[RMDB]
RNA sequence: GGGAACGACUCGAGUAGAGUCGAAAAAGGUUCAUGUUCACUAAUUAACGAACUAUUAAUGAGAGUUCAAAGACCACCCACUCUCUUGUUAGUGUUUUCACUCUCUCUUUUGGUCACUGCAUCCUCAUCUAACAGGUUCCUUCGGGAACCUGUUAGAAAAAGAAACAACAACAACAAC
Reactivity to DMS in 0.01 (KOAc 150mM, MgCl2 10mM, bicine 150mM(pH8.5), 24C), signal-to-noise 1, nucleotides 027 to 126: a010g000g000u000u010c000a220u000g000u000u010c040a140c110u000a060a090u000u000a130a090c020g000a070a040c100u020a100u000u010a070a000u050g000a130g000a020g010u040u040c050a000a100a070g000a070c000c040a030c010c060c000a100c080u000c000u000c090u000u010g030u000u020a040g000u010g000u010u030u000u010c000a100c050u070c000u020c020u000c000u070u000u000u000g000g020u000c020a020c040u010g010c070a040u000c030c000u000c090a170
Reactivity to 2A3 in 0.01 (KOAc 150mM, MgCl2 10mM, bicine 150mM(pH8.5), 24C), signal-to-noise 3, nucleotides 027 to 126: a000g080g000u070u050c040a050u150g060u040u040c070a070c100u160a240a060u300u150a100a050c050g000a030a010c020u060a080u150u200a060a150u200g030a050g020a010g050u070u130c070a100a060a000g030a020c000c030a020c010c010c010a020c000u020c000u000c010u030u060g100u060u110a050g000u050g010u030u050u130u100c030a040c010u000c000u000c010u020c010u020u050u090u140g020g000u010c020a040c060u050g020c030a010u030c000c000u000c000a050
An RNA of 177 nucleotides, treated with DMS and 2A3 and read out base by base.
For 2A3, 1,225 sequencing reads were counted.